Conditions: 150 mM KOAc, 10 mM MgCl2 and 150 mM bicine (pH 8.5), 24 C.
Chemical mapping of a 207-nucleotide RNA with DMS and 2A3.
Values are in units of 0.01, from 0 to 300, in steps of 10.
The data come from the RNA Mapping Database (RMDB), library RNAMAK.
The DMS profile rests on 3,388 reads.
The 2A3 profile rests on 1,461 reads.
RNA sequence: GGGAACGACUCGAGUAGAGUCGAAAAACCGGUGUUCGCACCGGUAAAAAGCGUACUACCUGUGUGGAGUCUGGGAACUACGACGGUGUCCCAAAUAGGACACCGUCGCCCAGACGUUGAAACACAGGUAUCGCAAAAAUAGCAGUUCGCUGCUAAACACAAUACUUCUGUUCGCAGAAGUAUUGUGAAAAGAAACAACAACAACAAC
Reactivity to DMS in 0.01 (KOAc 150mM, MgCl2 10mM, bicine 150mM(pH8.5), 24C), signal-to-noise 1, nucleotides 027 to 156: a030c020c000g030g010u000g000u000u000c300g020c040a030c000c000g000g040u000a000a010a040a160a060g020c000g010u020a080c160u010a000c030c010u010g050u000g040u000g000g030a160g030u000c020u000g010g000g010a160a180c040u030a130c000g020a050c000g030g030u000g040u000c020c000c010a050a110a140u000a100g000g010a030c000a000c000c000g010u000c020g030c000c000c000a020g010a000c000g020u020u010g020a150a160a020c020a000c020a020g000g000u000a000u000c000g070c040a030a070a070a090a130u010a050g000c000a100g000u000u010c180g050c000u000g010c000u010a090a080a250
Reactivity to 2A3 in 0.01 (KOAc 150mM, MgCl2 10mM, bicine 150mM(pH8.5), 24C), signal-to-noise 2, nucleotides 027 to 156: a000c020c010g010g000u020g010u040u060c130g060c110a000c000c010g000g020u010a020a000a000a000a000g040c040g030u120a180c060u010a010c000c000u010g010u000g000u010g030g010a020g020u010c020u000g000g050g010a160a080c090u120a080c290g000a000c000g000g000u040g010u010c010c020c000a180a170a110u210a050g000g000a000c000a000c030c000g000u000c000g000c000c000c000a000g000a000c000g000u010u000g000a000a000a000c010a000c000a010g000g000u000a000u000c000g020c000a010a000a000a090a000u030a010g000c000a000g000u100u190c240g070c090u000g000c010u050a030a120a000